[RMDB]
RNA sequence: GGGAACGACUCGAGUAGAGUCGAAAAGUCCAAAAUUGAUUCGGCGGCCCUGUCAUGAGGCCGAAACGAAGGCACGUACCCCUUCGAAUGACGUCGGGGAGUCAGCGGCUAUAUAUGCGCCUAAUGCUAAAGUCGUGCUGGUUCGCCAGCACGACAAGCUAUCAGGUACGUUCGCGUACCUGAUAGCAAAAGAAACAACAACAACAAC
Reactivity to 2A3 in 0.01 (KOAc 150mM, MgCl2 10mM, bicine 150mM(pH8.5), 24C), signal-to-noise 2, nucleotides 027 to 156: g060u080c060c010a100a130a000a030u210u230g000a040u010u090c070g000g010c030g000g020c080c030c000u030g100u070c060a090u070g060a100g020g000c000c020g000a030a030a010c030g050a040a020g060g000c070a010c120g180u090a040c030c000c000c000u040u020c030g140a120a150u230g050a080c050g000u020c020g020g000g000g010a030g050u060c020a020g000c050g000g000c030u020a020u010a000u020a000u280g010c000g020c010c000u160a220a000u130g020c060u110a190a070a040g000u000c000g000u010g000c010u020g000g030u040u030c300g010c080c000a000g000c010a000c010g000a000c000a000a000

The record gives the reactivity of an RNA of 207 nucleotides to 2A3. Conditions: 150 mM KOAc, 10 mM MgCl2 and 150 mM bicine (pH 8.5), 24 C.